Annotation
Chemical mapping of a 207-nucleotide RNA with DMS and 2A3. For DMS, 2,465 sequencing reads were counted. The RNA was probed in 150 mM KOAc, 10 mM MgCl2 and 150 mM bicine (pH 8.5) at 24 C.
RNA sequence: GGGAACGACUCGAGUAGAGUCGAAAAGCUGUGAUACUUAUUGCCUCAUUUGAAAAAAGUAAAUUUUGGCCAGGCAUGGUGACUCACACCUAUAAUCCCAGAACUUUAGGAGGCCAAGGAAGGAGGAUUGCUUGAGCCCAGGAGUUCAAGACCACCCCACAGGGAACAUAUUCGUAUGUUCCCUGUGAAAAGAAACAACAACAACAAC
Reactivity to DMS in 0.01 (KOAc 150mM, MgCl2 10mM, bicine 150mM(pH8.5), 24C), signal-to-noise 2, nucleotides 027 to 156: g030c040u030g000u090g010a130u000a070c030u000u000a080u000u000g020c110c030u030c050a170u000u000u000g010a000a130a090a090a070a080g000u000a070a080a150u000u000u000u000g020g020c090c090a070g010g050c010a000u000g010g030u000g020a110c120u000c050a080c030a000c020c010u010a200u000a100a120u010c020c000c000a230g000a050a100c060u000u020u000a110g000g000a120g040g010c000c010a030a080g000g010a090a090g000g030a100g040g010a080u000u010g020c070u020u000g010a120g060c000c040c020a220g020g010a080g010u000u010c020a010a050g000a110c060c030a080c020c040c050
Reactivity to 2A3 in 0.01 (KOAc 150mM, MgCl2 10mM, bicine 150mM(pH8.5), 24C), signal-to-noise 3, nucleotides 027 to 156: g020c040u000g000u060g030a030u070a120c010u100u150a100u180u130g010c030c010u060c100a160u110u170u290g130a100a070a020a020a000a070g130u170a120a180a210u080u110u070u100g050g020c050c000a000g000g000c000a000u000g030g000u020g070a070c010u020c020a020c000a000c030c010u070a100u040a260a030u010c040c000c000a000g050a110a050c030u040u040u060a060g010g070a060g030g010c010c020a000a020g050g000a040a030g030g050a020g040g010a100u060u090g030c020u000u010g010a040g040c000c000c010a030g070g070a060g020u000u020c030a020a000g030a030c030c080a030c000c000c000
The data come from the RNA Mapping Database (RMDB), library OK3TST.